[RMDB]
RNA sequence: GGGAACGACUCGAGUAGAGUCGAAAAGAUAUGGACUAUCUGGCGAUCCGAAGAACUCGGAAACGAGGGAGGAUCGCCAGAGUAGUCCUAAGUCAAACGGAAGUAACCGUUCGCGGUUACUUCCGAACCAUUGGAUGUCGUUCGCGACAUCCAAUGGAAAAGAAACAACAACAACAAC
Reactivity to 2A3 in 0.01 (KOAc 150mM, MgCl2 10mM, bicine 150mM(pH8.5), 24C), signal-to-noise 1, nucleotides 027 to 126: g050a020u120a050u240g010g000a000c000u010a000u000c020u030g020g000c000g020a000u040c000c000g100a220a000g020a030a030c010u040c010g000g060a040a030a050c040g000a020g000g040g010a040g050g000a010u000c010g010c000c000a000g000a000g000u010a000g010u000c000c000u020a060a000g010u040c010a110a090a040c030g000g010a000a010g000u000a000a000c020c000g040u060u130c300g040c020g130g000u000u000a010c000u000u000c000c010g010a010a010
Reactivity to DMS in 0.01 (KOAc 150mM, MgCl2 10mM, bicine 150mM(pH8.5), 24C), signal-to-noise 1, nucleotides 027 to 126: g000a020u000a300u010g000g010a010c020u000a000u000c000u000g010g000c010g000a010u000c000c000g000a090a110g010a130a180c000u000c000g050g000a130a040a170c030g000a000g000g000g020a100g000g020a020u000c010g010c000c000a000g000a020g000u010a000g010u000c000c000u020a000a060g000u020c050a080a080a240c020g000g010a000a000g000u000a000a000c000c000g010u000u000c260g010c000g000g000u000u000a000c000u010u000c010c000g010a000a090